RNA sequence: GGGAACGACUCGAGUAGAGUCGAAAAAGCGUUACUCGGAAUCACUGGGCGUAAAGGGCGCGUAGGCGGAUUAUCAAGUCUCUUGUGAAAUCUAAUGGCUUAACCAUUAAACUGCUUGGGAAACUGAGUUCAGGUAACCUUUCGAGGUUACCUGAACAAAAGAAACAACAACAACAAC
Reactivity to 2A3 in 0.01 (KOAc 150mM, MgCl2 10mM, bicine 150mM(pH8.5), 24C), signal-to-noise 2, nucleotides 027 to 126: a000g040c020g010u030u020a070c030u000c060g010g070a040a090u090c030a070c070u090g030g020g040c000g020u040a140a160a110g080g010g000c070g060c040g050u050a020g030g020c070g000g000a000u030u060a080u300c050a000a080g050u010c000u000c000u170u000g020u020g050a110a060a000u050c090u000a000a000u010g000g010c040u050u160a000a100c000c000a000u000u060a020a090a020c020u030g010c020u030u040g060g000g000a150a060a000c050u010g010a020
Reactivity to DMS in 0.01 (KOAc 150mM, MgCl2 10mM, bicine 150mM(pH8.5), 24C), signal-to-noise 2, nucleotides 027 to 126: a110g010c040g020u010u000a050c050u000c020g020g000a100a110u000c030a060c090u020g000g000g040c090g000u000a080a080a090g010g020g000c010g000c080g010u010a040g000g010c030g000g000a090u020u000a140u010c070a040a050g000u010c100u000c020u000u000g020u020g000a060a050a160u020c060u020a020a030u000g000g020c120u100u020a150a180c000c000a050u040u020a010a030a030c150u000g040c090u030u020g020g010g000a070a060a090c030u000g010a270